[RMDB]
RNA sequence: GGGAACGACUCGAGUAGAGUCGAAAAGAUAUGGAGUAAUAGCCAAAUGUGCUCGAAGAACAUCGUAACAUCACAGUCGGAAACGACUGUGUGGAUGGGAGAGCCAUUUGGCUAUUACUCCUAAGUCCACAUGUAACAAGUUCGCUUGUUACAUGUGAAAAGAAACAACAACAACAAC
Reactivity to DMS in 0.01 (KOAc 150mM, MgCl2 10mM, bicine 150mM(pH8.5), 24C), signal-to-noise 8, nucleotides 027 to 126: g010a090u010a300u010g000g000a030g020u000a020a010u000a010g010c000c000a000a020a010u000g010u020g030c000u000c000g010a140a170g010a170a240c000a000u000c010g020u010a100a220c180a070u010c010a000c000a000g010u000c000g000g000a110a120a220c010g000a010c000u000g020u000g020u010g000g000a010u000g000g000g010a150g000a010g010c000c000a010u000u000u000g000g010c000u000a000u000u000a000c000u000c000c000u000a010a070g010u000c040
Structure probing data (DMS) for a 177-nucleotide construct. Reactivities are given for positions 27 through 126. It was measured as part of the RMDB library TTRINS. For DMS the reverse transcriptase was MarathonRT. The RNA was probed in 150 mM KOAc, 10 mM MgCl2 and 150 mM bicine (pH 8.5) at 24 C. For DMS, 17,818 sequencing reads were counted.